[RMDB]
RNA sequence: GGGAACGACUCGAGUAGAGUCGAAAAGUUCCGGCAUUGUCGGGGUUGUAGGACUACAAUAUCGAGAAAAUAUUUGAAGUGGAAUCAACUGGAAAGUUGAACUGUAAAAAGUGAUAGUCUUGUACACCAUUUCAGCAUGUUUCGACAUGCUGAAAUGAAAAGAAACAACAACAACAAC
Reactivity to DMS in 0.01 (KOAc 150mM, MgCl2 10mM, bicine 150mM(pH8.5), 24C), signal-to-noise 6, nucleotides 027 to 126: g010u010u010c010c000g020g070c070a110u020u010g030u000c040g010g000g020g000u000u000g010u000a050g010g010a090c060u000a030c060a030a040u010a060u000c050g010a150g010a090a090a100a060u000a060u000u000u010g010a100a080g010u010g000g020a130a180u010c010a010a010c000u010g020g060a220a090a020g010u000u000g010a040a030c050u000g010u010a040a050a100a080a040g000u000g010a120u000a050g000u010c010u010u010g010u000a130c120a090c110
Reactivity to 2A3 in 0.01 (KOAc 150mM, MgCl2 10mM, bicine 150mM(pH8.5), 24C), signal-to-noise 4, nucleotides 027 to 126: g030u060u050c010c000g010g040c090a130u010u260g020u020c010g000g000g000g030u040u060g020u110a010g010g020a000c020u030a010c050a020a130u060a050u120c060g010a010g070a130a180a100a060u160a060u110u130u170g070a130a030g040u030g040g010a020a100u070c000a010a000c000u000g060g080a120a160a000g000u000u020g010a020a000c010u010g040u070a100a050a000a000a000g070u090g040a050u020a010g010u000c000u040u060g020u010a040c060a040c040